[RMDB]
RNA sequence: GGGAACGACUCGAGUAGAGUCGAAAAUGUAGGUCUAAUUGGAUUAUUAUUAGCCGUCGGAGUAGGUGGAAUUAUUGAAGGUAUUACCGGCCUUACAGGAGGUUUCACCCUUCAAGCAGGUGCUGCAAUCCUGAUCGCCUUUCGAGGCGAUCAGGAUAAAAGAAACAACAACAACAAC
Reactivity to 2A3 in 0.01 (KOAc 150mM, MgCl2 10mM, bicine 150mM(pH8.5), 24C), signal-to-noise 1, nucleotides 027 to 126: u140g050u040a060g020g030u000c130u080a000a100u100u270g060g110a020u050u000a030u030u000a040u000u040a140g000c000c000g000u060c000g000g000a000g000u140a070g060g000u000g110g030a120a160u120u070a050u030u140g030a000a000g020g070u090a040u000u300a200c030c000g150g050c000c000u000u060a110c000a120g140g000a080g080g050u000u050u040c040a000c000c000c000u020u010c000a020a020g020c020a060g150g000u000g010c000u000g000c000a000
Reactivity to DMS in 0.01 (KOAc 150mM, MgCl2 10mM, bicine 150mM(pH8.5), 24C), signal-to-noise 1, nucleotides 027 to 126: u000g040u040a000g000g000u000c080u000a150a050u020u010g040g010a060u000u070a040u040u000a050u000u000a080g010c040c010g050u010c070g000g000a140g020u000a040g010g020u030g000g000a040a050u010u000a050u050u010g000a010a000g000g000u000a080u000u000a070c150c140g030g000c030c000u000u000a080c120a210g000g000a150g010g010u020u000u000c050a080c010c000c030u000u000c040a110a120g020c160a040g000g000u010g040c000u000g000c110a000
Chemical mapping of a 177-nucleotide RNA with 2A3 and DMS.
As a SHAPE reagent, 2A3 marks flexible, mostly unpaired nucleotides at the ribose 2'-OH.
The RNA was probed in 150 mM KOAc, 10 mM MgCl2 and 150 mM bicine (pH 8.5) at 24 C.
For DMS, 1,445 sequencing reads were counted.